The record gives the reactivity of an RNA of 207 nucleotides to 2A3 and DMS. Values cover nucleotides 27 to 156. The reactions ran in a buffer of 150 mM KOAc, 10 mM MgCl2 and 150 mM bicine (pH 8.5), at 24 C. The 2A3 profile rests on 874 reads.
RNA sequence: GGGAACGACUCGAGUAGAGUCGAAAAGUGGAAGAAGGCCCUACAGUAUUGAGAAAGGCUGGUCUGCUUGAGAAACUUAAAGAACAAGGUAAUUUUUAAGUUGAAAAAUGAUCAGCCUGAUUUCCUCCCCACUCUGAAGGAAAGAGCAGGCCCCUGAGCUACCUAUAGGAUUCGUCCUAUAGGUAGCAAAAGAAACAACAACAACAAC
Reactivity to 2A3 in 0.01 (KOAc 150mM, MgCl2 10mM, bicine 150mM(pH8.5), 24C), signal-to-noise 2, nucleotides 027 to 156: g040u020g010g020a070a060g020a030a070g120g020c000c000c000u090a080c040a040g120u100a070u190u300g020a100g030a070a060a000g000g000c000u000g000g020u000c000u040g040c070u090u130g040a070g070a050a090a000c000u010u020a030a010a010g040a060a040c050a110a080g110g000u070a080a170u000u120u000u000u070a040a000g010u030u040g060a070a060a020a010a010u070g010a000u010c010a000g010c010c000u020g000a010u010u010u000c000c000u060c010c010c030c000a000c020u090c030u020g030a020a030g020g020a120a040a070g010a010g000c000a020g010g000c000c000c000c040u000g010a020
Reactivity to DMS in 0.01 (KOAc 150mM, MgCl2 10mM, bicine 150mM(pH8.5), 24C), signal-to-noise 2, nucleotides 027 to 156: g000u000g000g010a090a060g020a130a130g000g030c020c020c000u010a100c090a160g060u020a110u000u010g020a160g020a190a070a040g020g020c000u000g010g020u000c030u000g020c220u020u010g020a130g010a300a030a030c010u010u010a000a030a050g010a030a120c070a080a130g030g010u030a050a120u000u000u000u000u000a000a010g000u000u000g000a060a100a080a070a200u010g000a020u000c000a010g000c000c000u000g000a050u010u000u010c000c010u000c000c010c020c050a080c090u000c030u010g010a060a060g010g000a090a060a080g000a050g030c040a070g000g000c030c000c030c070u000g000a200